The record gives the reactivity of an RNA of 177 nucleotides to 2A3 and DMS. It was measured as part of the RMDB library OK2TRN. The 2A3 profile rests on 2,956 reads.
RNA sequence: GGGAACGACUCGAGUAGAGUCGAAAACCUGGGCGCUGCGCCGGCGCAGAUCGUCGAUCAGCCGCUGCUCGGCUGCGGUGUCGGGAACCACUUUCUUGGCGGCGUCGGUGGGGGUGGCGGCGCGCAGGUGCCUUUAAGGAUUCGUCCUUAAAGGCACAAAAGAAACAACAACAACAAC
Reactivity to 2A3 in 0.01 (KOAc 150mM, MgCl2 10mM, bicine 150mM(pH8.5), 24C), signal-to-noise 3, nucleotides 027 to 126: c010c000u040g020g090g010c030g000c040u070g000c040g000c000c030g020g030c020g000c010a040g040a210u180c040g080u020c070g060a060u070c070a040g030c020c000g010c030u070g020c040u070c130g110g000c030u060g020c050g080g150u090g030u030c000g010g020g010a040a030c080c020a080c190u140u240u120c080u110u150g060g000c030g030g000c000g020u030c040g000g030u050g040g030g000g000g020u020g020g000c000g000g000c010g010c000g000c020a010g050
Reactivity to DMS in 0.01 (KOAc 150mM, MgCl2 10mM, bicine 150mM(pH8.5), 24C), signal-to-noise 2, nucleotides 027 to 126: c000c000u000g010g000g020c040g010c000u020g030c000g000c010c000g000g020c040g000c050a090g000a050u010c020g020u020c090g000a070u000c080a230g020c010c020g000c080u000g000c030u000c070g030g020c010u000g050c040g010g030u000g030u000c050g000g000g000a070a100c150c180a100c200u000u000u000c050u010u000g010g010c030g010g020c000g020u000c020g010g000u000g010g010g010g000g020u000g020g000c010g000g010c000g000c000g020c060a030g000